The data come from the RNA Mapping Database (RMDB), library OK1LIB. The record gives the reactivity of an RNA of 177 nucleotides to 2A3. 2A3 adducts were read by reverse transcription with SuperScript II with manganese.
RNA sequence: GGGAACGACUCGAGUAGAGUCGAAAAACUCUAAGUGAGUUUCCUCAUUCGGAAAUCUUCGGAUCAAAGUUUACGUGCAACUCCCCGAAGCUUAUCGCAGCUUAUCACGUCCUUCAUCGGCUCCUAGCCGCAGCGUGCCAUUCGUGGCACGCUGCGGAAAAGAAACAACAACAACAAC
Reactivity to 2A3 in 0.01 (KOAc 150mM, MgCl2 10mM, bicine 150mM(pH8.5), 24C), signal-to-noise 1, nucleotides 027 to 126: a000c070u070c050u060a150a050g060u140g150a020g080u050u090u050c000c020u110c020a060u060u060c080g050g070a020a130a090u050c020u020u020c090g000g020a020u090c070a060a160a110g010u020u030u060a090c010g060u100g220c010a010a010c000u030c030c020c000c020g000a020a000g000c020u060u040a220u020c030g040c030a040g000c010u070u070a030u060c070a000c010g060u000c090c000u000u010c020a020u040c000g010g000c030u000c040c010u010a020g000